[RMDB]
RNA sequence: GGGAACGACUCGAGUAGAGUCGAAAACCUAUCCAAAAUGAGAUCCCAUCUUGCACACUGUGCUAAUUUGAGAUUCUCAUGCCUCCUACUUGGAGAGAUCUGGACUAGCAGUCAGGGCAUCUGACUCAAUACAUUCGUCAGUUCGCUGACGAAUGAACGAUAAAAUUAGGUUCGCCUAAUUUUAUCGAAAAGAAACAACAACAACAAC
Reactivity to 2A3 in 0.01 (KOAc 150mM, MgCl2 10mM, bicine 150mM(pH8.5), 24C), signal-to-noise 9, nucleotides 027 to 156: c000c000u010a050u030c020c010a060a020a010a090u010g000a000g000a010u000c010c000c000a000u010c010u010u020g010c010a020c040a090c200u300g010u010g020c060u180a050a060u010u010u010g030a030g000a020u300u050c000u000c000a000u020g010c000c010u000c000c010u130a300c150u180u300g000g000a010g000a020g020a070u050c070u100g010g030a030c040u060a040g040c050a010g030u000c000a010g020g060g190c090a130u100c080u000g000a010c000u010c030a040a100u100a110c010a000u000u000c000g000u000c000a000g010u020u100c190g010c110u000g000a000c000g000a000a000u000g000a010a010
Reactivity to DMS in 0.01 (KOAc 150mM, MgCl2 10mM, bicine 150mM(pH8.5), 24C), signal-to-noise 4, nucleotides 027 to 156: c000c020u010a090u010c020c020a040a050a110a120u000g000a020g010a070u000c000c010c010a050u000c080u000u000g010c010a040c020a200c140u020g010u000g020c010u000a020a020u000u010u000g000a020g000a020u000u000c010u010c010a010u010g010c080c000u000c020c010u000a130c210u010u000g010g010a050g000a140g000a050u000c050u000g000g000a150c090u000a100g010c060a050g000u000c000a020g010g020g000c150a120u000c000u010g000a040c010u000c040a070a120u000a130c010a030u000u000c000g020u000c000a030g020u000u000c300g040c000u000g010a030c010g010a000a010u000g010a060a160

Chemical mapping of a 207-nucleotide RNA with 2A3 and DMS. Source: RMDB library M2RFPK, as collected in RNAgym.